[RMDB]
RNA sequence: GGGAACGACUCGAGUAGAGUCGAAAAGUUUAUUGGACGGUGAUUAGUGACUGCAACACAAAGUUUGAUAAAGAGGAGGUCGUUUGUCACCAUUUCCUCAUCGAGAAAUCAGGCGAAAAGUAUUGCCGUUCUAAUUCGAGUUCGCUCGAAUUAGAACAAAAGAAACAACAACAACAAC
Reactivity to DMS in 0.01 (KOAc 150mM, MgCl2 10mM, bicine 150mM(pH8.5), 24C), signal-to-noise 3, nucleotides 027 to 126: g020u000u000u000a120u010u000g000g000a070c110g000g000u020g000a020u030u000a030g020u000g050a070c110u030g030c120a070a080c080a040c080a070a080a200g000u010u000u010g010a090u000a040a060a160g010a060g000g000a120g020g020u000c070g010u000u000u020g020u020c100a000c050c050a110u010u000u000c010c000u000c090a150u000c190g010a110g020a080a060a040u000c010a050g000g000c010g000a030a060a090a110g020u000a030u000u000g000c090c070
Reactivity to 2A3 in 0.01 (KOAc 150mM, MgCl2 10mM, bicine 150mM(pH8.5), 24C), signal-to-noise 3, nucleotides 027 to 126: g000u000u130u190a190u120u140g070g010a020c040g000g060u010g010a010u050u090a010g000u010g040a040c060u020g020c010a080a080c040a050c040a140a180a060g040u050u060u120g150a150u170a090a120a020g080a020g050g020a020g000g020u000c010g030u060u120u110g090u040c000a010c030c000a000u040u060u010c000c010u070c020a110u120c080g100a140g100a090a170a070u100c010a030g020g000c030g100a110a040a000a040g050u030a100u080u070g020c050c000